[RMDB]
RNA sequence: GGGAACGACUCGAGUAGAGUCGAAAAGAUAUGGAACUCGAGGGCAGGUCAACAGCACUCGUCGGAAACGACGAGUGACAUGACCGAUGCUCGAGGUUCCUAAGUCAAAGGUUCGUUCGCGAACCAACACUAUAUUGUUGUUCGCAACAAUAUAGUGAAAAGAAACAACAACAACAAC
Reactivity to DMS in 0.01 (KOAc 150mM, MgCl2 10mM, bicine 150mM(pH8.5), 24C), signal-to-noise 9, nucleotides 027 to 126: g010a060u010a300u010g000g010a020a040c000u000c020g010a180g020g000g050c120a290g010g000u000c000a030a090c300a150g010c010a000c000u000c000g010u000c000g000g000a110a110a260c000g010a000c000g000a020g010u000g000a010c060a180u000g000a010c000c000g000a140u020g000c000u000c000g010a090g000g000u000u000c000c000u000a050a120g010u010c050a090a130a150g010g010u000u000c000g030u000u010c270g020c020g010a010a010c010c010a100a180
Reactivity to 2A3 in 0.01 (KOAc 150mM, MgCl2 10mM, bicine 150mM(pH8.5), 24C), signal-to-noise 9, nucleotides 027 to 126: g020a010u120a060u210g010g010a010a000c010u020c140g010a050g030g160g020c140a030g040g000u010c020a070a070c050a240g050c000a000c000u000c000g000u000c010g010g050a080a070a060c020g000a000c000g000a000g000u000g010a020c000a050u060g000a000c000c000g020a070u080g070c000u000c000g000a010g000g000u010u000c000c000u010a090a030g070u030c080a160a080a120g020g000u000u010c010g020u050u110c300g010c010g140a010a000c000c000a020a000